[RMDB]
RNA sequence: GGGAACGACUCGAGUAGAGUCGAAAAGAGAGCAUGUACCGGGCACCGACACCGCCCCGGCGUACGACCUGCUCAAGUACACCGAUGGCGAGGUCGCCGGGGUCGAGCUCGGCAAGCGGCGACCCCACGAUAGGAUCCUGUUCGCAGGAUCCUAUCGAAAAGAAACAACAACAACAAC
Reactivity to DMS in 0.01 (KOAc 150mM, MgCl2 10mM, bicine 150mM(pH8.5), 24C), signal-to-noise 3, nucleotides 027 to 126: g010a210g000a180g010c020a050u000g000u000a100c020c020g000g020g000c050a110c150c080g010a130c090a070c190c120g000c030c010c050c020g010g040c080g040u010a070c160g000a100c040c020u010g010c040u000c070a060a100g020u010a120c150a110c130c030g000a150u010g010g010c020g020a050g000g000u000c020g020c020c050g000g000g020g000u000c030g010a110g020c050u000c040g000g000c050a070a160g010c040g010g010c010g030a090c050c000c000c070a230
Reactivity to 2A3 in 0.01 (KOAc 150mM, MgCl2 10mM, bicine 150mM(pH8.5), 24C), signal-to-noise 2, nucleotides 027 to 126: g110a000g010a020g000c060a060u100g020u060a040c000c010g020g020g010c040a070c120c090g160a060c050a040c140c030g020c010c010c000c000g040g000c000g010u060a030c110g010a030c010c000u010g020c000u010c150a020a030g040u060a080c110a080c050c090g050a140u170g010g000c100g080a040g000g040u010c010g000c000c010g020g000g020g000u030c000g000a010g000c000u000c020g000g000c000a070a020g070c030g080g000c010g010a070c000c010c000c000a030